About this RNA:
The record gives the reactivity of an RNA of 207 nucleotides to DMS and 2A3. Reactivities are given for positions 27 through 156.
RNA sequence: GGGAACGACUCGAGUAGAGUCGAAAACCUGGGUCAGCACCGGAGCAUCCAGGCACUUCAGCUCGUCUGGGUAGUCAGCUGUGAGGAUCAGGAAGAGAUCAAAGAAAGUAGAAAUGUGGGUGAGGCCAGAGAAGGAGACAAUAAUCUGGGAUGGAAAGUAGGAUAAUUAGUUCGCUAAUUAUCCUACAAAAGAAACAACAACAACAAC
Reactivity to DMS in 0.01 (KOAc 150mM, MgCl2 10mM, bicine 150mM(pH8.5), 24C), signal-to-noise 2, nucleotides 027 to 156: c010c000u000g020g020g030u000c040a180g030c020a120c040c040g000g000a140g020c030a030u000c020c020a100g020g040c030a080c070u000u020c080a090g000c040u000c070g000u000c020u000g020g030g040u000a100g000u000c050a050g020c040u000g000u010g020a060g030g000a040u000c030a100g010g020a060a090g020a110g040a020u010c060a040a060a130g000a050a080a110g010u000a160g000a030a090a090u000g020u010g020g000g010u000g010a090g010g000c040c030a020g000a080g000a080a040g020g000a100g020a070c080a040a090u000a050a060u000c030u010g030g000g020a110u000g010g010a090a070a240
Reactivity to 2A3 in 0.01 (KOAc 150mM, MgCl2 10mM, bicine 150mM(pH8.5), 24C), signal-to-noise 5, nucleotides 027 to 156: c000c000u020g030g020g010u050c050a020g000c030a060c050c030g030g040a020g030c010a010u020c010c000a000g010g000c010a030c030u160u140c070a030g030c050u080c110g050u010c030u040g000g070g000u040a070g080u050c050a010g020c020u030g040u030g070a050g030g020a040u040c040a030g030g020a050a010g010a010g010a000u060c070a050a050a060g090a030a090a010g050u110a030g060a090a100a070u140g020u070g040g020g010u040g020a040g000g050c030c020a000g000a000g020a050a020g030g010a020g020a010c050a070a080u100a070a030u040c050u090g020g000g010a040u070g030g040a030a060a040